RNA sequence: GGGAACGACUCGAGUAGAGUCGAAAACCGCGAGGGAAAGGUGAAAAGAACCGCUGUGAGCGGAGUGAAAUAGAACCUGAAACCGUAUGUCUACAAAGUGUCAGAGCAGAGCAAUCUGCGAUGGCGUACUUAAGAGAAAGUUCGCUUUCUCUUAAGUAAAAGAAACAACAACAACAAC
Reactivity to DMS in 0.01 (KOAc 150mM, MgCl2 10mM, bicine 150mM(pH8.5), 24C), signal-to-noise 9, nucleotides 027 to 126: c010c030g020c110g010a160g020g000g010a190a160a020g000g010u000g010a130a080a120a110g000a200a150c010c000g010c000u010g020u010g010a090g020c010g000g000a080g010u000g010a080a060a060u010a070g000a210a040c020c010u000g010a070a140a250c040c020g010u000a060u010g010u010c090u000a090c190a040a080a090g020u010g010u000c000a010g000a300g010c010a000g000a010g000c300a060a110u000c000u000g010c000g010a090u000g010g000c000g000u000
Reactivity to 2A3 in 0.01 (KOAc 150mM, MgCl2 10mM, bicine 150mM(pH8.5), 24C), signal-to-noise 6, nucleotides 027 to 126: c010c000g000c050g060a180g000g030g020a010a070a020g020g000u020g020a030a040a010a070g050a070a010c010c000g000c030u100g180u210g290a050g020c010g000g030a050g050u120g050a020a030a000u090a040g070a030a020c000c000u000g020a150a030a010c000c000g040u100a090u220g150u020c040u080a130c070a090a110a020g070u110g000u070c000a000g010a000g000c000a000g010a000g000c020a030a080u010c000u000g000c000g000a010u000g000g000c010g000u020
Source information:
This 177-nucleotide RNA was probed chemically with DMS and 2A3. The data come from the RNA Mapping Database (RMDB), library RFMREP. The DMS profile rests on 10,885 reads. 2A3 is a SHAPE reagent: it acylates the 2'-hydroxyl of flexible nucleotides of all four kinds. The reactions ran in a buffer of 150 mM KOAc, 10 mM MgCl2 and 150 mM bicine (pH 8.5), at 24 C. DMS adducts were read by reverse transcription with MarathonRT.